Overview
Structure probing data (2A3 and DMS) for a 177-nucleotide construct. Values are in units of 0.01, from 0 to 300, in steps of 10. Source: RMDB library TTRDEL, as collected in RNAgym. DMS adducts were read by reverse transcription with MarathonRT. The RNA was probed in 150 mM KOAc, 10 mM MgCl2 and 150 mM bicine (pH 8.5) at 24 C. Values cover nucleotides 27 to 126. The 2A3 profile rests on 6,373 reads.
[RMDB]
RNA sequence: GGGAACGACUCGAGUAGAGUCGAAAAGAUAUGGACUGCACCAACAGCAUGUCAUUCGGAAACGAAUGCAUGACAUGGGGCAGUCCUAAGUCAAAUCGUUUGCAUCGGUUCGCCGAUGCAAACGAAACAAAUAACAUGCCUUCGGGCAUGUUAUUUGAAAAGAAACAACAACAACAAC
Reactivity to 2A3 in 0.01 (KOAc 150mM, MgCl2 10mM, bicine 150mM(pH8.5), 24C), signal-to-noise 2, nucleotides 027 to 126: g030a000u040a020u060g000g000a010c010u010g000c010a050c060c000a060a190c100a160g120c010a000u030g180u300c010a020u020u010c000g010g020a030a000a020c010g010a010a000u010g010c000a000u010g130a120c080a080u020g010g000g000g030c010a000g000u020c000c000u010a010a000g000u000c010a020a020a210u040c010g010u030u000u000g010c000a000u020c000g020g110u070u080c300g040c100c000g000a000u000g000c010a010a000a000c000g000a000a000a010
Reactivity to DMS in 0.01 (KOAc 150mM, MgCl2 10mM, bicine 150mM(pH8.5), 24C), signal-to-noise 3, nucleotides 027 to 126: g010a030u000a290u010g000g000a000c000u000g020c000a040c000c010a030a140c300a180g010c020a000u000g000u020c010a000u000u000c000g010g010a070a030a120c000g010a010a010u000g000c010a000u000g000a070c070a160u000g000g010g010g010c000a010g010u000c000c000u000a010a040g000u000c020a100a140a160u000c010g010u000u010u000g000c000a000u000c000g010g000u000u010c220g020c000c000g030a010u000g010c000a000a000a000c000g010a000a040a150